[RMDB]
RNA sequence: GGGAACGACUCGAGUAGAGUCGAAAAAGAAGUCCUACUGAUCAAACAUGCGCUUCCAAUAGUAGAAGGACGUUAAGCAUUUAUCAUUGAACUAUAAUUGUUCAUUGAAGUCAUUGAUGCAAACUCCAUGAUGUAAAGGGUUCGCCCUUUACAUCAUAAAAGAAACAACAACAACAAC
Reactivity to 2A3 in 0.01 (KOAc 150mM, MgCl2 10mM, bicine 150mM(pH8.5), 24C), signal-to-noise 9, nucleotides 027 to 126: a000g130a070a000g040u030c020c010u030a070c040u090g050a090u090c070a070a090a060c030a090u130g020c030g000c040u050u020c030c020a070a150u060a120g110u030a040g060a150a050g030g010a020c070g010u040u060a100a050g000c000a010u010u040u080a080u060c010a000u000u020g000a000a000c020u050a040u150a300a220u240u150g000u010u000c000a000u000u020g020a040a010g070u110c080a100u050u190g020a010u010g000c000a040a040a030c010u000c030c010
Reactivity to DMS in 0.01 (KOAc 150mM, MgCl2 10mM, bicine 150mM(pH8.5), 24C), signal-to-noise 9, nucleotides 027 to 126: a060g010a110a100g010u010c020c000u000a070c090u010g000a080u010c110a080a080a130c100a060u010g010c090g010c060u000u000c030c050a090a090u020a070g010u010a060g010a150a080g000g000a020c130g010u000u000a080a120g010c010a020u000u000u000a060u010c000a010u000u000g000a010a000c000u000a100u030a080a120u040u010g000u000u000c000a000u000u000g000a030a080g010u020c200a110u010u010g010a010u000g010c020a090a050a050c060u000c040c050